RNA sequence: GGGAACGACUCGAGUAGAGUCGAAAAAAAUAUUUGAAGUGGAAUCAACUGGAAAGUUGAACUGUAAAAAGUGAUAGUCUUGUACACGUAAGAAUAUUAAUCGUAGUAGUAUCCUGAGUACCACGGACGUUAUGCCACAAUUCGUUGUGGCAUAACGAAAAGAAACAACAACAACAAC
Reactivity to 2A3 in 0.01 (KOAc 150mM, MgCl2 10mM, bicine 150mM(pH8.5), 24C), signal-to-noise 2, nucleotides 027 to 126: a000a010a020u040a010u010u010u010g010a130a000g000u010g000g010a040a000u010c000a000a000c000u000g040g000a050a000a000g000u040u020g010a020a000c010u010g000u040a090a060a000a050a050g000u030g010a020u010a010g010u050c000u000u010g010u020a000c020a010c000g030u010a040a020g010a030a020u050a000u050u070a050a060u090c040g030u020a060g000u020a000g050u020a050u030c010c020u020g060a030g060u020a080c050c020a030c010g020g020a000
Reactivity to DMS in 0.01 (KOAc 150mM, MgCl2 10mM, bicine 150mM(pH8.5), 24C), signal-to-noise 3, nucleotides 027 to 126: a020a050a010u000a000u000u000u000g010a100a190g000u000g040g000a060a030u000c020a010a010c000u020g010g010a300a030a020g000u010u000g010a000a020c020u000g010u010a020a010a050a020a020g010u000g020a010u030a020g000u000c000u000u010g000u020a270c000a010c030g000u000a120a230g010a020a010u000a000u010u000a070a060u010c020g010u000a050g010u000a070g020u000a060u010c020c000u000g020a100g000u000a020c000c030a040c030g000g000a160
This 177-nucleotide RNA was probed chemically with 2A3 and DMS. DMS adducts were read by reverse transcription with MarathonRT. The data come from the RNA Mapping Database (RMDB), libraries RFM100 and RFMREP. The 2A3 profile rests on 2,022 reads. Reactivities are given for positions 27 through 126.